[RMDB]
RNA sequence: GGGAACGACUCGAGUAGAGUCGAAAAACGAAAACUACGCACUCGCAGCGUAAUAACCUGCGCUGAGCCCUUCUCCCCCAGCUUGCCUGUGUCCUAGGGAAUUGGAAGGUCAUCCUUCACAGGAUCGUCUAGGUAAUCCCUUUCGAGGGAUUACCAAACAGAAAGUUGGUUUCGACCAACUUUCUGUAAAAGAAACAACAACAACAAC
Reactivity to DMS in 0.01 (KOAc 150mM, MgCl2 10mM, bicine 150mM(pH8.5), 24C), signal-to-noise 1, nucleotides 027 to 156: a090c020g020a130a110a050a080c040u010a000c020g030c040a180c060u000c150g010c060a060g000c020g050u000a130a090u000a070a090c050c040u000g000c000g020c110u020g020a090g010c020c020c010u010u000c030u020c010c020c010c020c010a070g020c100u010u020g000c030c030u010g000u000g000u010c030c040u000a040g000g040g030a100a110u000u000g040g010a090a040g040g050u010c020a110u000c030c020u010u010c130a100c100a040g000g020a100u010c110g000u010c030u010a160g010g020u000a010a000u000c020c000c000u000u000u020c270g030a090g000g020g010a010u000u000a000c000c020a040a030
This 207-nucleotide RNA was probed chemically with DMS. It was measured as part of the RMDB library M2RFPK.